[RMDB]
RNA sequence: GGGAACGACUCGAGUAGAGUCGAAAAGGCGACGCAGUUGAAAUCGUCAACGAACUGGAUGCCGAUGAUGCAGUCGCCGUCAUUGCCCAGCUUUCGCACGACGACGCCAUCCGCCUGCUGGACCAGACACUGACUCAGGUUUCGACCUGAGUCAGUGAAAAGAAACAACAACAACAAC
Reactivity to 2A3 in 0.01 (KOAc 150mM, MgCl2 10mM, bicine 150mM(pH8.5), 24C), signal-to-noise 2, nucleotides 027 to 126: g000g030c020g000a000c020g060c080a030g040u140u110g110a110a110a030u010c000g000u000c020a010a020c020g080a070a020c050u100g130g030a090u080g040c050c010g020a010u030g020a020u020g000c050a030g130u100c010g000c100c000g010u000c000a010u000u160g000c010c010c000a000g010c050u100u090u040c040g000c030a050c130g080a010c020g000a010c020g050c010c000a070u030c040c020g000c010c030u060g000c020u050g020g040a070c000c020a020g030a080
Reactivity to DMS in 0.01 (KOAc 150mM, MgCl2 10mM, bicine 150mM(pH8.5), 24C), signal-to-noise 3, nucleotides 027 to 126: g010g010c000g030a020c060g010c090a090g030u000u000g010a080a170a070u000c000g010u000c020a080a070c040g020a060a140c120u000g000g000a200u000g010c070c040g000a010u000g010a110u010g000c000a170g000u010c050g010c000c000g030u010c060a080u000u010g000c000c000c000a100g020c100u000u000u010c050g020c080a070c090g010a060c060g010a050c070g010c210c010a070u000c040c020g010c050c010u000g010c050u000g000g000a130c000c090a090g030a240